[RMDB]
RNA sequence: GGGAACGACUCGAGUAGAGUCGAAAAGUACCCUUGUUCGCAAGGGUACAAAGACAGACUUCACUGUCAUAAAGAAGGUAACAACUCAGUUACAAUAAGAGAAAAGCACCUACUUCGGUAGGUGCAACAUUCCAAUGAUCUUCGGAUCAUUGGAAUGAAAAGAAACAACAACAACAAC
Reactivity to 2A3 in 0.01 (KOAc 150mM, MgCl2 10mM, bicine 150mM(pH8.5), 24C), signal-to-noise 6, nucleotides 027 to 126: g000u010a000c010c000c000u010u000g040u000u050c150g010c110a000a000g000g000g000u000a000c000a000a000a000g000a000c010a010g030a040c020u080u040c150a030c090u020g000u010c010a020u210a040a160a030g140a040a040g100g010u020a020a000c050a020a100c070u070c230a060g000u020u020a020c030a050a090u190a150a050g160a010g070a040a090a030a050g000c000a000c000c000u010a010c010u020u060c120g050g000u000a000g000g000u010g000c010a000a000
Reactivity to DMS in 0.01 (KOAc 150mM, MgCl2 10mM, bicine 150mM(pH8.5), 24C), signal-to-noise 4, nucleotides 027 to 126: g010u000a000c000c000c000u000u010g000u010u010c170g030c020a010a010g000g010g010u000a000c000a040a070a100g010a020c010a010g000a140c110u000u010c130a090c000u000g010u000c050a110u020a040a110a060g000a050a090g020g010u000a020a020c020a090a100c160u010c110a110g010u000u000a010c020a090a080u010a100a090g000a150g000a070a060a120a120g010c010a010c000c000u000a000c000u000u010c110g030g020u000a000g000g000u000g000c020a010a020
The record gives the reactivity of an RNA of 177 nucleotides to 2A3 and DMS. Conditions: 150 mM KOAc, 10 mM MgCl2 and 150 mM bicine (pH 8.5), 24 C. 2A3 adducts were read by reverse transcription with SuperScript II with manganese. Values cover nucleotides 27 to 126. DMS adducts were read by reverse transcription with MarathonRT. For DMS, 4,557 sequencing reads were counted.